RNA sequence: GGGAACGACUCGAGUAGAGUCGAAAAGAUAGGGCAAUCCAAUCACCGAAGGAGGACAUUCUGUCGGCACCACGGGCCCUUGCGUAGGCACAUGCUAAUGGAGAUAGGUUCUCGAUAUCGGAUACAAAGUAUAUUUGUUUUUCAACAUCGGAAAGUGAUAACAAUGGAGUUUCGACUCCAUUGUUAUAAAAGAAACAACAACAACAAC
Reactivity to DMS in 0.01 (KOAc 150mM, MgCl2 10mM, bicine 150mM(pH8.5), 24C), signal-to-noise 3, nucleotides 027 to 156: g000a120u010a060g020g010g030c040a090a100u010c020c030a150a140u010c080a160c060c020g020a150a090g010g000a160g010g010a120c090a130u010u000c040u000g020u000c010g020g030c030a100c090c060a100c130g000g040g020c000c000c020u000u000g010c130g050u010a040g020g060c020a110c090a230u000g010c060u000a070a090u020g000g000a110g010a150u010a130g020g000u000u010c030u000c010g000a050u010a050u000c050g030g010a070u000a040c030a010a020a070g020u000a100u000a100u000u010u000g010u000u000u020u000u000c030a020a000c030a040u000c030g000g000a070a050a110g010u010g020
Reactivity to 2A3 in 0.01 (KOAc 150mM, MgCl2 10mM, bicine 150mM(pH8.5), 24C), signal-to-noise 3, nucleotides 027 to 156: g050a020u120a080g000g030g000c050a060a070u040c040c050a030a070u100c080a080c060c020g000a030a040g060g000a040g010g010a010c010a040u070u060c030u060g100u090c050g030g000c020a030c080c020a080c040g030g020g000c030c000c000u030u130g030c070g030u040a060g010g030c010a020c020a060u060g000c010u070a100a020u100g020g000a060g030a120u080a050g030g080u040u000c020u000c000g020a020u040a080u100c050g010g040a020u040a090c030a050a100a030g070u050a100u010a020u250u040u000g020u000u020u020u010u060c050a060a070c010a030u110c060g090g030a100a130a010g100u180g100